[RMDB]
RNA sequence: GGGAACGACUCGAGUAGAGUCGAAAAUUGUCCAGGAUGCAAGGGCUAGGAGUAAGCUGCCAUUUUCUCCUGAGCAUGAUACAAAUGACAUCAGCAGGUACAUCUUCGCAGAGGGGCAGGACUUCAACAUUCUCCAAGUCUUCGGACUUGGAGAAUGAAAAGAAACAACAACAACAAC
Reactivity to DMS in 0.01 (KOAc 150mM, MgCl2 10mM, bicine 150mM(pH8.5), 24C), signal-to-noise 4, nucleotides 027 to 126: u010u030g000u000c010c020a110g000g010a070u020g010c080a080a130g010g000g000c050u000a070g000g020a030g000u020a060a070g020c060u010g000c040c010a180u020u010u020u020c050u000c050c000u000g000a100g020c040a050u000g010a060u010a050c110a070a090a100u010g010a110c080a050u010c070a090g020c090a050g000g020u010a070c100a060u030c020u000u020c060g020c130a050g000a100g020g000g000g000c030a030g030g000a050c080u010u020c050a020a160
Reactivity to 2A3 in 0.01 (KOAc 150mM, MgCl2 10mM, bicine 150mM(pH8.5), 24C), signal-to-noise 4, nucleotides 027 to 126: u100u110g030u030c030c050a040g110g000a020u100g040c070a060a080g090g010g000c020u080a080g000g030a040g050u070a070a040g020c020u020g040c060c020a070u070u090u070u030c030u010c010c010u030g020a030g020c040a020u120g030a020u040a090c100a020a170a050u210g040a100c040a120u050c020a040g030c010a020g020g010u020a010c010a100u030c000u090u070c070g000c050a020g030a040g070g010g020g020c010a010g000g080a030c020u020u030c070a030a040